[RMDB]
Structure probing data (2A3 and DMS) for a 177-nucleotide construct. The RNA was probed in 150 mM KOAc, 10 mM MgCl2 and 150 mM bicine (pH 8.5) at 24 C. It was measured as part of the RMDB library VIROID. 2A3 adducts were read by reverse transcription with SuperScript II with manganese. The DMS profile rests on 845 reads.
RNA sequence: GGGAACGACUCGAGUAGAGUCGAAAAGGUGCCCUAUUCGGGACACUGCAGUUCCGAUAGAAAGGCUAAGAACGUCGCAAUGACGUAAGGUGGGACUUUUCCUUCUGGAACCAAGCGGUUGGUUCCGCAUCGCCUUUGUGUUCGCACAAAGGCGAUGAAAAGAAACAACAACAACAAC
Reactivity to 2A3 in 0.01 (KOAc 150mM, MgCl2 10mM, bicine 150mM(pH8.5), 24C), signal-to-noise 1, nucleotides 027 to 126: g000g000u060g020c000c000c000u020a020u040u080c000g020g020g000a000c000a010c130u300g050c020a080g000u000u030c000c000g000a000u010a000g050a030a120a000g040g000c030u030a050a060g050a140a080c000g020u020c000g030c270a250a290u300g010a010c000g030u010a010a030g100g020u100g010g040g010a000c000u110u010u020u000c030c000u050u050c070u090g020g000a010a000c000c000a030a000g110c080g240g120u060u020g000g000u010u000c010c000g000
Reactivity to DMS in 0.01 (KOAc 150mM, MgCl2 10mM, bicine 150mM(pH8.5), 24C), signal-to-noise 1, nucleotides 027 to 126: g030g000u000g010c000c010c010u000a070u000u000c030g040g000g010a010c000a080c250u020g000c210a160g010u000u000c000c000g020a060u000a040g010a100a100a150g020g000c010u000a050a130g010a090a000c020g020u000c000g000c190a120a130u040g020a010c010g010u000a020a050g010g000u010g010g010g000a100c090u000u000u020u000c000c030u000u000c160u000g010g000a010a020c020c000a040a060g010c240g000g000u000u010g010g000u000u000c030c020g000